[RMDB]
Chemical mapping of a 207-nucleotide RNA with DMS and 2A3.

RNA sequence: GGGAACGACUCGAGUAGAGUCGAAAAUGGGUGUGGUGAUGGGUGCCUGUAUUCCUAGCUACUCAGGAGGCUGAGGUGGGAGGAUCACCUGAGCCCAGGAGGUCGAGGCUGCAGUAAGCCACUCCAGCCUUGGUGACAGACAGAGUAAGACCCUGUCAACACAAACGGAUUUCGAUCCGUUUGUGUUAAAAGAAACAACAACAACAAC
Reactivity to DMS in 0.01 (KOAc 150mM, MgCl2 10mM, bicine 150mM(pH8.5), 24C), signal-to-noise 1, nucleotides 027 to 156: u020g010g000g030u000g030u020g000g000u000g010a060u000g060g040g070u020g000c000c020u000g010u020a060u010u020c020c000u000a080g040c040u000a030c020u000c020a140g050g010a130g060g000c010u020g000a050g000g040u000g000g020g030a060g000g010a090u010c030a030c020c000u000g000a070g000c040c000c040a070g020g000a090g020g000u000c050g010a040g000g020c090u000g040c040a170g020u020a090a160g000c090c030a120c010u000c050c000a050g020c020c010u000u000g020g000u000g000a110c030a080g010a110c000a300g000a060g020u000a060a210g000a300c050c020c000u000g030u000c020
Reactivity to 2A3 in 0.01 (KOAc 150mM, MgCl2 10mM, bicine 150mM(pH8.5), 24C), signal-to-noise 2, nucleotides 027 to 156: u070g040g000g000u030g000u080g030g020u050g030a100u060g080g030g000u010g030c000c000u050g050u050a060u050u080c010c000u030a100g030c020u080a080c010u010c040a070g030g080a120g040g000c020u050g060a000g000g000u010g020g050g010a130g030g020a050u070c010a010c000c000u030g070a000g000c010c000c000a020g000g040a030g000g030u050c030g040a020g010g000c010u000g020c000a000g020u120a080a020g030c040c000a020c000u010c020c010a010g000c030c000u020u100g050g000u060g010a010c020a030g010a000c000a010g020a000g040u070a090a030g020a030c010c010c000u020g020u020c030
DMS adducts were read by reverse transcription with MarathonRT. 2A3 adducts were read by reverse transcription with SuperScript II with manganese. It was measured as part of the RMDB library OK3TST.